RNA sequence: GGGAACGACUCGAGUAGAGUCGAAAAGAUAUGGAGAGGAUCCUGGAGCACUGCGUCGGAAACGACGCUGUGCGAUGAAGGGAUCUACCCACCUCCUAAGUCAAAGAUAGGGGUUCGCCCCUAUCAACACGCUGGGUAAGUUCGCUUACCCAGCGUGAAAAGAAACAACAACAACAAC
Reactivity to DMS in 0.01 (KOAc 150mM, MgCl2 10mM, bicine 150mM(pH8.5), 24C), signal-to-noise 1, nucleotides 027 to 126: g000a010u000a010u000g020g000a000g030a300g030g010a000u000c000c020u000g030g010a030g010c010a000c010u010g000c030g010u000c000g010g010a020a020a000c010g010a010c010g030c000u000g010u010g000c010g030a050u010g000a250a170g010g010g000a010u000c000u010a050c160c110c030a160c300c000u000c000c000u000a010a190g000u000c020a140a060a150g010a010u000a010g010g000g030g000u010u010c250g040c020c000c000c010u000a000u010c010a050a180
Structure probing data (DMS) for a 177-nucleotide construct. The RNA was probed in 150 mM KOAc, 10 mM MgCl2 and 150 mM bicine (pH 8.5) at 24 C. It was measured as part of the RMDB library TTRDEL.